[RMDB]
RNA sequence: GGGAACGACUCGAGUAGAGUCGAAAACGUCUAACACUUCGGUGUUAGACGAAAGGGGGUAUAGUAUAAUUGGUAGUACAGCAAUCUUGCUCAUUGCUUGUCAAGGUUCAAAUCCUUGUAUCUCCACCAAAAAGCUUGUUAGAUUCGUCUAACAAGCCCACGGUUCAUUCUUCGGAAUGAACCGUGGAAAAGAAACAACAACAACAAC
Reactivity to 2A3 in 0.01 (KOAc 150mM, MgCl2 10mM, bicine 150mM(pH8.5), 24C), signal-to-noise 2, nucleotides 027 to 156: c000g000u000c000u000a000a000c000a010c030u070u060c260g170g000u000g000u000u000a000g000a000c000g000a040a000a000g020g000g010g000g000u000a010u000a020g000u010a020u010a030a040u120u160g170g010u100a010g040u060a010c000a000g030c000a010a030u100c030u230u300g050c090u130c110a020u030u010g000c000u010u020g000u000c000a000a000g000g000u000u010c000a000a000a010u010c000c000u000u010g000u010a000u000c010u050c000c000a020c000c020a060a140a050a000a000g010c000u010u010g010u000u000a010g000a030u020u040c180g010u030c160u010a000a000c000a000a000g000c010